An RNA of 177 nucleotides, treated with 2A3 and DMS and read out base by base. For DMS, 814 sequencing reads were counted. High DMS reactivity at an A or C suggests that its Watson-Crick edge is free. It was measured as part of the RMDB library M2PK90. The 2A3 profile rests on 984 reads.
[RMDB]
RNA sequence: GGGAACGACUCGAGUAGAGUCGAAAAUCAAAUAAUUCCACCGACUGCCCAUUGUGGGUUACCAGUUGCUCUGAUGAUGGCCCAAGUGGGAGUAAAGAGAAGAAGCCACAUAGGAUCAACAAAAAAAGAGGAUAAUAUGGUUCGCCAUAUUAUCCUCAAAAGAAACAACAACAACAAC
Reactivity to 2A3 in 0.01 (KOAc 150mM, MgCl2 10mM, bicine 150mM(pH8.5), 24C), signal-to-noise 1, nucleotides 027 to 126: u060c030a150a000a000u100a130a090u150u000c030c030a070c030c020g040a010c000u210g130c010c000c020a000u040u100g110u090g120g020g040u010u010a020c000c010a010g010u050u070g140c080u060c010u200g090a070u040g000a010u050g040g020c010c010c000a040a000g040u040g000g010g000a000g010u000a010a070a030g030a010g040a140a010g060a080a000g010c020c010a040c010a090u090a110g050g000a050u090c010a010a090c000a120a000a030a000a030a000a030
Reactivity to DMS in 0.01 (KOAc 150mM, MgCl2 10mM, bicine 150mM(pH8.5), 24C), signal-to-noise 2, nucleotides 027 to 126: u010c060a050a130a070u030a110a070u000u010c030c020a100c140c100g030a080c050u000g000c000c000c010a010u000u000g030u000g010g000g010u000u000a010c030c020a060g010u010u000g020c230u030c020u000g000a080u000g030a120u010g000g020c000c000c010a070a050g000u010g010g050g010a070g000u000a020a100a180g000a150g010a030a060g010a070a080g020c000c060a050c100a090u010a060g010g000a090u010c140a060a050c060a000a010a090a090a030a020a100